Description:
Structure probing data (DMS and 2A3) for a 177-nucleotide construct. 2A3 adducts were read by reverse transcription with SuperScript II with manganese. It was measured as part of the RMDB library RFMREP. DMS adducts were read by reverse transcription with MarathonRT.

[RMDB]
RNA sequence: GGGAACGACUCGAGUAGAGUCGAAAAGAUGGUAAUGGUAAACCGUUCUGCUCAGGUUCAGACUCCGGCAGGCCUGACGGAUACUGAGUCCAAAUGUCGUUAUCAGAUGAGUGACCAGCUCACGCUUACAGUUUUACAAGUUCGCUUGUAAAACUGUAAAAGAAACAACAACAACAAC
Reactivity to DMS in 0.01 (KOAc 150mM, MgCl2 10mM, bicine 150mM(pH8.5), 24C), signal-to-noise 1, nucleotides 027 to 126: g010a030u000g000g010u000a040a100u030g020g010u000a140a090a070c060c000g010u010u010c020u000g030c080u010c050a060g010g000u030u010c080a090g000a200c140u050c020c020g000g010c080a130g000g000c080c030u010g030a040c090g000g000a060u000a180c040u000g000a060g000u000c060c040a080a070a050u010g000u000c000g020u000u000a060u020c060a090g010a220u000g010a060g000u000g010a090c020c010a260g000c000u000c040a040c100g000c160u000u000
Reactivity to 2A3 in 0.01 (KOAc 150mM, MgCl2 10mM, bicine 150mM(pH8.5), 24C), signal-to-noise 1, nucleotides 027 to 126: g100a040u070g010g010u100a080a070u100g000g110u130a230a090a030c020c020g000u050u000c010u020g010c020u010c070a050g000g050u090u040c050a050g030a200c040u030c020c000g000g040c020a070g050g040c020c030u030g000a020c020g020g000a020u040a170c040u030g030a000g070u050c010c000a020a120a100u140g030u010c010g050u040u060a070u140c030a040g080a240u040g000a080g030u080g020a070c050c060a020g000c000u010c020a020c000g060c010u000u000